This 177-nucleotide RNA was probed chemically with 2A3 and DMS. The reactions ran in a buffer of 150 mM KOAc, 10 mM MgCl2 and 150 mM bicine (pH 8.5), at 24 C. DMS adducts were read by reverse transcription with MarathonRT. The DMS profile rests on 1,513 reads.
RNA sequence: GGGAACGACUCGAGUAGAGUCGAAAAGAGGCCGAUGACCUUGAUUUCAUUGAUGGAUGUAUCGGCUGCAUAGCCGGAGAGUGCCGGAGCGGCACCGCUUUCCAUCUGGAAAAACGCAUCCAAGUCAGAUAAUCGAUCACUUCGGUGAUCGAUUAUCAAAAGAAACAACAACAACAAC
Reactivity to 2A3 in 0.01 (KOAc 150mM, MgCl2 10mM, bicine 150mM(pH8.5), 24C), signal-to-noise 2, nucleotides 027 to 126: g050a010g050g000c100c110g030a090u050g050a140c030c050u120u090g050a040u000u140u090c060a070u010u100g060a040u080g020g030a000u000g020u090a060u110c020g050g010c000u010g000c080a190u270a150g000c000c000g000g000a040g000a040g000u020g030c000c030g130g070a160g060c230g000g000c000a000c030c010g020c020u070u110u040c020c040a110u010c080u080g010g050a030a050a010a010a010c100g000c010a010u050c000c000a060a050g090u110c010a010
Reactivity to DMS in 0.01 (KOAc 150mM, MgCl2 10mM, bicine 150mM(pH8.5), 24C), signal-to-noise 2, nucleotides 027 to 126: g010a030g010g030c010c030g000a050u010g000a300c030c030u000u000g010a150u010u010u010c010a070u000u000g010a100u000g010g000a010u000g000u000a080u010c010g010g000c000u000g020c220a100u000a000g030c010c010g000g000a070g000a180g020u000g000c010c000g000g020a190g000c120g030g050c000a020c000c020g020c070u000u000u020c000c000a150u000c130u020g000g000a010a020a050a050a090c160g000c010a040u010c010c120a070a080g020u000c130a120

The 2A3 profile rests on 1,063 reads. 2A3 adducts were read by reverse transcription with SuperScript II with manganese. Reactivities are given for positions 27 through 126.